[RMDB]
RNA sequence: GGGAACGACUCGAGUAGAGUCGAAAAAGACUUUAAUGAAGUUUGCGACCCAACUUCAUUUAGCCGGCACUGUUGGGUCAUUUGCCGAUUUGACAUCAAGCCCCGAUGAAUUCGUUAGGGCGCAUCGCCGAUAGUCACGCUUCGGCGUGACUAUCGGAAAAGAAACAACAACAACAAC
Reactivity to 2A3 in 0.01 (KOAc 150mM, MgCl2 10mM, bicine 150mM(pH8.5), 24C), signal-to-noise 2, nucleotides 027 to 126: a000g120a030c030u100u100u250a010a050u000g100a040a050g020u050u070u050g070c070g030a060c000c000c000a000a000c000u000u230c000a080u090u040u090a060g030c000c000g000g000c040a000c140u100g000u100u190g000g010g060u010c090a000u160u110u050g100c000c020g010a040u000u000u300g080a040c040a000u010c050a050a060g020c000c000c000c020g100a110u080g060a070a100u290u160c040g010u120u120a020g000g000g000c020g000c000a040u030c120g080
An RNA of 177 nucleotides, treated with 2A3 and read out base by base. For 2A3 the reverse transcriptase was SuperScript II with manganese. The reactions ran in a buffer of 150 mM KOAc, 10 mM MgCl2 and 150 mM bicine (pH 8.5), at 24 C. 2A3 is a SHAPE reagent: it acylates the 2'-hydroxyl of flexible nucleotides of all four kinds.